[RMDB]
Conditions: 150 mM KOAc, 10 mM MgCl2 and 150 mM bicine (pH 8.5), 24 C. Structure probing data (2A3) for a 207-nucleotide construct. It was measured as part of the RMDB library M2RFPK. For 2A3 the reverse transcriptase was SuperScript II with manganese.
RNA sequence: GGGAACGACUCGAGUAGAGUCGAAAAUUACCGCCCAGGAUGGGGUGCAGCGUUCCUGCAAUAUCCAGGGCACCUAGGUGCAGCCUUGUAGUAUUAGUGGACUUUAGGCUAAAGAAUUUCACUAGCAAAAAUCUUUAAGGGUUCGCCCUUAAAGAAACAAGACCUGUAUCUUCGGAUACAGGUCUUGAAAAGAAACAACAACAACAAC
Reactivity to 2A3 in 0.01 (KOAc 150mM, MgCl2 10mM, bicine 150mM(pH8.5), 24C), signal-to-noise 2, nucleotides 027 to 156: u120u010a020c000c030g000c000c010c000a030g010g010a000u060g060g030g000g210u060g030c010a010g010c020g100u180u170c020c010u010g000c000a010a040u010a000u170c020c030a020g000g010g000c030a040c030c000u050a040g170g010u080g090c010a010g070c030c020u040u030g080u100a100g000u050a090u080u040a050g020u030g030g000a000c000u000u030u100a020g010g070c010u070a100a100a030g020a050a050u010u230u280c000a010c020u080a000g000c050a030a100a110a120a210u000c010u000u010u000a030a000g010g030g020u020u110c210g060c000c000c000u010u010a010a010a000g020a010a010a000
Values cover nucleotides 27 to 156.